[RMDB]
RNA sequence: GGGAACGACUCGAGUAGAGUCGAAAAUGAAGUCGUGCUGACCGAGUUGGUUGACCUGCCCGGCGGAUCGUUCCGCAUGGGCUCGACGCGCUUCUACCCCGAAGAAGCGCCGAUUCAUACCGUGACCGAUGCUAUCCGUGUUCGCACGGAUAGCAUCAAAAGAAACAACAACAACAAC
Reactivity to DMS in 0.01 (KOAc 150mM, MgCl2 10mM, bicine 150mM(pH8.5), 24C), signal-to-noise 3, nucleotides 027 to 126: u000g000a130a060g030u000c030g050u020g030c110u010g010a050c000c030g000a200g010u010u010g020g020u010u010g000a120c060c030u000g000c000c000c010g000g030c020g000g010a040u020c270g000u000u020c000c000g000c030a020u000g010g000g000c030u000c060g010a180c270g010c040g010c020u000u000c010u000a210c060c010c010c030g000a190a010g000a030a010g030c000g010c000c050g000a090u020u000c070a060u000a090c060c030g010u000g000a140c120c100
Reactivity to 2A3 in 0.01 (KOAc 150mM, MgCl2 10mM, bicine 150mM(pH8.5), 24C), signal-to-noise 1, nucleotides 027 to 126: u090g010a060a010g040u030c010g040u100g070c140u070g030a050c020c010g020a030g080u100u060g140g070u080u060g110a090c000c000u040g000c000c000c000g050g000c030g050g010a060u140c140g180u220u060c010c000g090c010a100u130g000g000g030c010u000c010g030a030c020g010c070g000c000u010u000c000u050a180c020c000c010c000g020a070a000g000a000a000g010c030g000c030c000g020a010u000u100c060a080u080a150c000c040g040u020g080a070c040c060
Structure probing data (DMS and 2A3) for a 177-nucleotide construct.
Source: RMDB library OK2TRN, as collected in RNAgym.
For DMS, 2,223 sequencing reads were counted.
The reactions ran in a buffer of 150 mM KOAc, 10 mM MgCl2 and 150 mM bicine (pH 8.5), at 24 C.